[RMDB]
RNA sequence: GGGAACGACUCGAGUAGAGUCGAAAAAGCCCUGUUUCAAGAAUAGUGCUUAAUAAGAAGUGAAAUAGUAUUAGCUCUUAUUAUUACUAUCAUCAUCCAUCCAUUGAGCCAGUUAAUAUGAAUGCUAUCUACUCAGCAGGGGUGAAUCCAGAGAUAAGUCUGAUUUAAAAUUCGUUUUAAAUCAGACAAAAGAAACAACAACAACAAC
Reactivity to 2A3 in 0.01 (KOAc 150mM, MgCl2 10mM, bicine 150mM(pH8.5), 24C), signal-to-noise 2, nucleotides 027 to 156: a000g020c000c000c000u000g040u000u030u020c060a080a090g070a160a030u020a020g020u040g050c040u030u020a010a000u020a030a010g100a170a040g000u050g050a100a100a060u150a120g120u100a120u200u060a040g000c000u000c010u020u020a010u020u000a010u010u060a030c000u010a020u010c030a040u060c000a010u000c020c000a030u000c000c000a020u050u070g020a000g040c040c030a020g050u070u060a110a070u100a130u300g150a170a030u080g010c030u030a040u070c010u020a030c010u010c030a010g020c030a020g000g000g000g040u010g020a010a020u010c050c020a060g030a010g020a090u050a140a000
Reactivity to DMS in 0.01 (KOAc 150mM, MgCl2 10mM, bicine 150mM(pH8.5), 24C), signal-to-noise 2, nucleotides 027 to 156: a190g020c000c010c010u000g010u000u000u020c080a120a170g010a140a070u000a040g020u000g010c050u000u000a020a020u000a060a020g000a080a140g020u010g010a180a140a120u000a130g000u000a300u000u000a300g010c030u000c070u000u000a040u000u000a020u000u000a020c010u010a030u020c050a110u000c010a050u000c000c000a130u010c000c030a130u000u000g020a050g000c000c120a100g000u000u010a090a090u000a090u010g000a060a070u010g030c020u000a080u000c030u010a040c040u000c020a030g040c110a070g010g020g030g000u000g000a030a080u000c020c030a150g010a090g020a110u010a090a270

About this RNA: This 207-nucleotide RNA was probed chemically with 2A3 and DMS. Reactivities are given for positions 27 through 156. DMS adducts were read by reverse transcription with MarathonRT. The 2A3 profile rests on 1,698 reads. For DMS, 2,995 sequencing reads were counted.